[RMDB]
RNA sequence: GGGAACGACUCGAGUAGAGUCGAAAAAGCGUUCCCUCUCGAUGAAGCAGAAGAUGUUACUGAAUCUGUGCAAGAAGAAGCACAACCAGUAGAAGUACCUGUUGAAGAUAUUGCGCAGGUUGUCAUACGAUGAUAUAAGGUUCGCCUUAUAUCAUCGAAAAGAAACAACAACAACAAC
Reactivity to DMS in 0.01 (KOAc 150mM, MgCl2 10mM, bicine 150mM(pH8.5), 24C), signal-to-noise 7, nucleotides 027 to 126: a060g000c070g000u000u000c000c000c000u010c080u000c060g010a100u010g010a120a100g010c020a050g010a090a070g010a100u010g010u000u000a060c050u010g010a140a060u000c080u010g000u000g010c030a060a070g000a130a140g010a120a130g020c050a060c000a020a060c100c020a030g000u000a030g010a110a080g000u010a040c060c010u000g000u000u000g010a090a080g010a080u000a080u000u010g010c050g000c050a040g000g010u000u000g020u000c090a100u010a170
Reactivity to 2A3 in 0.01 (KOAc 150mM, MgCl2 10mM, bicine 150mM(pH8.5), 24C), signal-to-noise 5, nucleotides 027 to 126: a000g040c010g000u000u000c000c050c000u000c000u000c010g120a120u100g090a140a010g020c030a020g020a150a010g050a100u070g040u110u030a050c030u040g040a030a050u020c040u030g000u000g000c020a010a050g090a060a010g080a070a010g110c000a000c000a020a030c030c010a010g020u030a020g030a110a000g060u060a050c000c020u020g020u100u090g030a040a010g050a080u060a080u120u120g040c040g000c020a000g040g060u010u040g060u010c000a020u040a140